RNA sequence: GGGAACGACUCGAGUAGAGUCGAAAAUGCAUUCAUUACCAUGUAGCCACCUCCAUCUUCAAGCCAGCAACAGGACGUUAAAUCCUCUUAUGCAUCAAAUCUCUGCCUUCCUGUCCUGCCACCAGCCAGAGAAAACAUUCUGCUUUUAAGGCCUCAAGUACCCAGCUAAUUUCGAUUAGCUGGGUACAAAAGAAACAACAACAACAAC
Reactivity to 2A3 in 0.01 (KOAc 150mM, MgCl2 10mM, bicine 150mM(pH8.5), 24C), signal-to-noise 3, nucleotides 027 to 156: u070g000c030a060u030u100c020a030u080u190a060c050c010a040u060g050u100a030g040c010c010a030c010c020u000c040c000a070u030c060u070u080c030a060a050g010c000c010a010g000c030a050a030c020a070g040g010a020c020g040u060u100a010a090a080u050c020c010u090c020u110u070a030u180g040c020a030u040c060a040a110a170u050c060u010c020u050g030c010c000u010u050c030c000u050g030u030c010c000u000g050c030c000a020c000c010a010g030c040c000a000g020a000g000a070a130a020a000c000a020u090u090c000u070g070c010u000u070u050u100a060a070g020g000c000c000u010c030a020a100
Reactivity to DMS in 0.01 (KOAc 150mM, MgCl2 10mM, bicine 150mM(pH8.5), 24C), signal-to-noise 2, nucleotides 027 to 156: u000g000c030a120u000u000c100a070u000u020a120c090c030a090u010g010u020a050g030c020c030a070c030c010u000c020c010a060u010c070u030u000c030a040a130g020c020c060a100g020c050a090a090c030a030g030g020a040c020g000u000u010a050a110a120u000c000c030u000c040u000u010a110u000g030c040a090u000c020a030a060a110u000c020u000c020u000g000c020c010u000u000c000c020u020g020u010c010c000u000g010c020c030a070c060c040a130g040c050c060a080g000a080g010a120a040a080a100c040a100u000u000c020u000g000c030u000u000u000u000a110a120g000g010c010c000u010c010a030a300
Conditions: 150 mM KOAc, 10 mM MgCl2 and 150 mM bicine (pH 8.5), 24 C.
Chemical mapping of a 207-nucleotide RNA with 2A3 and DMS.
It was measured as part of the RMDB library OK3TST.
DMS adducts were read by reverse transcription with MarathonRT.
For DMS, 3,521 sequencing reads were counted.